RNA sequence: GGGAACGACUCGAGUAGAGUCGAAAACCGUAGGCACUGCUAGUGCUAUCUACCCUUGGACCCUCGCUUCGAAAGAGGCGAGGCUAGGGUAGAAUAGCACUUGGACCAGUGCCUAAACGGAAAGAGGAUAGAUUAAGUUCGCUUAAUCUAUCCUCAAGGAAUUGUUAUGUUUCGACAUAACAAUUCCAAAAGAAACAACAACAACAAC
Reactivity to DMS in 0.01 (KOAc 150mM, MgCl2 10mM, bicine 150mM(pH8.5), 24C), signal-to-noise 1, nucleotides 027 to 156: c000c000g030u000a010g030g010c010a030c010u010g040c020u000a030g000u000g040c000u000a010u000c000u000a030c030c020c010u000u000g060g000a130c260c000c010u000c000g000c010u010u010c000g010a180a160a300g000a020g050g000c030g010a010g030g000c010u010a010g000g110g000u000a000g020a020a030u000a000g000c000a010c010u000u010g060g020a110c200c000a030g010u000g030c000c000u000a000a040a060c000g020g000a080a140a170g010a030g030g010a030u000a000g000a020u000u000a020a030g000u000u010c300g080c010u000u000a020a010u010c000u020a000u000c000c000u000c000a000a040
Reactivity to 2A3 in 0.01 (KOAc 150mM, MgCl2 10mM, bicine 150mM(pH8.5), 24C), signal-to-noise 2, nucleotides 027 to 156: c010c000g020u020a000g000g000c000a000c000u010g010c020u030a010g000u010g000c010u000a010u000c000u000a010c000c000c000u040u130g110g090a200c010c020c000u010c000g000c000u000u020c000g110a150a090a070g000a000g010g010c010g000a000g000g000c000u010a000g000g000g000u000a000g000a000a000u000a000g000c010a000c010u000u060g010g030a050c110c000a000g000u000g000c000c000u010a000a000a000c020g060g040a170a150a030g010a000g000g000a000u010a010g000a000u010u000a010a010g030u060u170c240g000c180u000u000a000a000u000c000u000a000u000c000c000u000c000a000a000